[RMDB]
RNA sequence: GGGAACGACUCGAGUAGAGUCGAAAAGAAAGGGACCCCUGCCAGGGGAGCGUCGGUCAGCACCCCAAGCAUAUUUUUUUAUGCCGCUGACACCCCUCGACGCGGCAGGAGGGGUGGUCCCGAAAGAAAAUACUGAGGAUUUCGAUCCUCAGUAUUUAAAAGAAACAACAACAACAAC
Reactivity to DMS in 0.01 (KOAc 150mM, MgCl2 10mM, bicine 150mM(pH8.5), 24C), signal-to-noise 4, nucleotides 027 to 126: g000a110a100a260g000g000g010a040c020c020c010c020u000g000c010c030a150g010g010g020g000a120g010c010g020u000c030g010g000u010c000a010g010c020a110c110c000c010c040a150a160g000c010a010u000a000u000u000u010u010u010u000u000a010u000g010c000c080g010c010u000g010a030c020a210c050c020c030c040u010c030g000a040c050g000c030g010g010c030a030g000g000a100g010g010g010g020u000g020g000u000c000c000c010g000a060a080a110g010a100
Reactivity to 2A3 in 0.01 (KOAc 150mM, MgCl2 10mM, bicine 150mM(pH8.5), 24C), signal-to-noise 1, nucleotides 027 to 126: g010a070a060a020g010g020g000a010c000c040c030c000u000g050c010c000a090g070g010g060g020a010g050c010g040u030c040g010g000u010c010a010g000c000a100c000c060c020c010a010a000g000c020a020u010a070u120u230u100u020u070u050u020a000u020g030c040c050g000c030u000g000a010c020a070c040c020c000c030u010c030g000a010c040g000c060g020g000c010a010g000g080a020g000g030g020g050u060g010g000u000c000c000c010g000a020a020a010g000a020